[RMDB]
RNA sequence: GGGAACGACUCGAGUAGAGUCGAAAAGCGUCGUCGUCGUCGUCGUCGGCCGUCAGAUACGUGGCUUCCAUCUGGUCGGGUUCUCCCUCCGGGGCGGGUCCCCACACCCGUGGCCGAUCGAGGCUCCGGAGAGAUACGGUUUCGACCGUAUCUCUCCAAAAGAAACAACAACAACAAC
Reactivity to 2A3 in 0.01 (KOAc 150mM, MgCl2 10mM, bicine 150mM(pH8.5), 24C), signal-to-noise 3, nucleotides 027 to 126: g030c010g030u020c010g010u010c000g030u000c010g020u010c010g020u000c010g010u000c020g010g000c020c000g070u060c030a010g020a070u100a070c070g040u080g000g060c000u070u030c020c010a050u030c010u040g020g060u070c000g030g020g020u070u040c050u040c040c000c020u040c020c040g000g000g000g020c030g020g010g000u080c030c040c000c000a020c000a020c010c010c040g040u060g020g050c010c010g010a040u090c060g040a040g040g020c010u040c040c040
Reactivity to DMS in 0.01 (KOAc 150mM, MgCl2 10mM, bicine 150mM(pH8.5), 24C), signal-to-noise 2, nucleotides 027 to 126: g040c000g020u000c020g020u000c050g000u000c010g040u000c120g030u040c040g000u040c060g000g000c040c010g000u000c060a030g000a060u020a040c170g030u000g000g010c070u000u000c130c060a080u020c020u030g000g000u010c040g020g000g010u040u000c010u000c000c040c040u010c110c060g010g000g000g000c100g000g010g000u000c020c020c040c020a160c030a070c070c010c030g000u000g030g000c000c000g000a000u050c180g040a100g000g000c050u020c090c080
This 177-nucleotide RNA was probed chemically with 2A3 and DMS. For DMS the reverse transcriptase was MarathonRT. Reactivities are given for positions 27 through 126.